[RMDB]
RNA sequence: GGGAACGACUCGAGUAGAGUCGAAAAUGGGUCAAAAGCCUAUGAAGCAACGGCGGCACGCGGACACAGACUAAAAAAUAACUUUCACGAUUAUGAAAAUAAACAUGCAAAGUUGUCGCCAAGAAUUGAUAAUAGAUCACUUCGGUGAUCUAUUAUCAAAAGAAACAACAACAACAAC
Reactivity to DMS in 0.01 (KOAc 150mM, MgCl2 10mM, bicine 150mM(pH8.5), 24C), signal-to-noise 3, nucleotides 027 to 126: u000g030g000g020u020c030a070a090a070a270g000c000c000u000a020u010g010a120a080g000c150a190a050c140g000g000c010g020g010c010a070c090g020c030g000g010a090c120a040c060a020g010a030c120u100a010a010a100a050a060a040u000a000a020c010u000u030u000c010a030c090g010a070u000u000a010u000g000a090a030a110a020u000a010a030a060c040a030u000g010c170a010a010a020g000u000u000g010u000c010g020c000c010a060a060g020a100a110u000u000
Reactivity to 2A3 in 0.01 (KOAc 150mM, MgCl2 10mM, bicine 150mM(pH8.5), 24C), signal-to-noise 6, nucleotides 027 to 126: u040g010g010g010u090c070a060a020a000a060g020c000c010u050a050u130g090a050a020g040c060a050a060c040g010g000c000g010g000c000a000c020g080c060g070g050a020c050a000c010a080g140a070c120u250a030a010a030a020a000a060u120a040a020c020u040u090u090c070a040c080g110a080u110u120a050u190g050a000a010a030a060u160a010a060a020c050a020u130g060c070a070a040a040g010u050u010g010u010c000g000c010c020a000a010g040a020a040u020u020

The record gives the reactivity of an RNA of 177 nucleotides to DMS and 2A3. DMS adducts were read by reverse transcription with MarathonRT. For 2A3 the reverse transcriptase was SuperScript II with manganese.